[RMDB]
RNA sequence: GGGAACGACUCGAGUAGAGUCGAAAAGUAAAGCGCGAGGGCUGGUGAGGAUUUGGAGGCGUGAGAGAGAUUGUAGGGAUCCUGGCUCCUCCCUCUCCGCGCGGCGCCUCCUAGCCGAUAUAAAAAACCCGAAAUACCUAUUCGUAGGUAUUUCGGGAAAAGAAACAACAACAACAAC
Reactivity to 2A3 in 0.01 (KOAc 150mM, MgCl2 10mM, bicine 150mM(pH8.5), 24C), signal-to-noise 1, nucleotides 027 to 126: g050u050a040a140a020g050c100g020c080g120a070g040g050g040c020u030g010g090u190g060a000g010g060a070u090u200u300g140g060a050g000g080c000g000u050g000a150g000a000g020a020g020a050u120u200g070u120a020g060g000g000a050u090c040c020u050g150g060c020u020c000c010u000c010c010c000u000c000u000c000c010g060c000g050c000g040g000c020g000c000c000u000c000c000u000a000g000c000c000g000a000u000a000u140a160a120a010a010a000a000
Reactivity to DMS in 0.01 (KOAc 150mM, MgCl2 10mM, bicine 150mM(pH8.5), 24C), signal-to-noise 1, nucleotides 027 to 126: g000u010a070a080a120g010c100g060c070g000a100g010g000g020c020u000g000g040u000g020a050g000g000a050u000u010u010g000g000a080g020g000c020g020u000g000a190g000a040g000a040g010a160u000u010g020u000a060g000g010g000a110u010c050c060u000g010g020c060u000c010c020u000c080c110c020u000c000u000c000c060g010c030g020c020g020g030c040g000c010c000u000c010c000u000a010g000c020c000g000a080u000a060u010a000a130a100a040a060a050